Conditions: 150 mM KOAc, 10 mM MgCl2 and 150 mM bicine (pH 8.5), 24 C. This 177-nucleotide RNA was probed chemically with DMS and 2A3. For 2A3 the reverse transcriptase was SuperScript II with manganese.
RNA sequence: GGGAACGACUCGAGUAGAGUCGAAAAGUGGUUGUGUAGCAACCCUUUGGAGUAUUUUUUUGGAAAAAAUGCUAAAUAUAAGAAAACUCCUCAAACAAGGGAAAGUUCGAGGAGUUCGGCAUUUACCAUACGAGAUUGUUUUCGAACAAUCUCGUAUAAAAGAAACAACAACAACAAC
Reactivity to DMS in 0.01 (KOAc 150mM, MgCl2 10mM, bicine 150mM(pH8.5), 24C), signal-to-noise 4, nucleotides 027 to 126: g030u050g030g010u000u000g020u000g020u020a110g020c030a020a020c000c000c010u000u010u000g000g010a090g000u010a000u000u000u000u010u000u040u030g000g020a010a040a040a030a000a000u000g000c000u010a080a070a150u030a170u060a090a110g000a110a110a030a030c000u000c000c000u000c000a020a010a010c000a060a120g040g020g010a100a090a100g000u000u000c050g010a020g000g010a020g000u000u000c050g000g010c020a020u000u000u010a130c050c000
Reactivity to 2A3 in 0.01 (KOAc 150mM, MgCl2 10mM, bicine 150mM(pH8.5), 24C), signal-to-noise 8, nucleotides 027 to 126: g180u180g020g000u010u020g010u030g130u160a050g060c010a020a040c000c000c000u020u030u030g030g010a040g030u040a060u010u010u010u010u010u090u080g020g000a090a120a040a020a000a000u000g000c010u090a080a130a090u300a180u070a100a030g030a030a110a010a010c000u000c010c010u000c020a050a050a030c040a080a050g150g020g050a070a080a030g000u020u040c030g000a000g000g000a000g000u000u000c000g000g000c000a000u010u000u040a170c010c000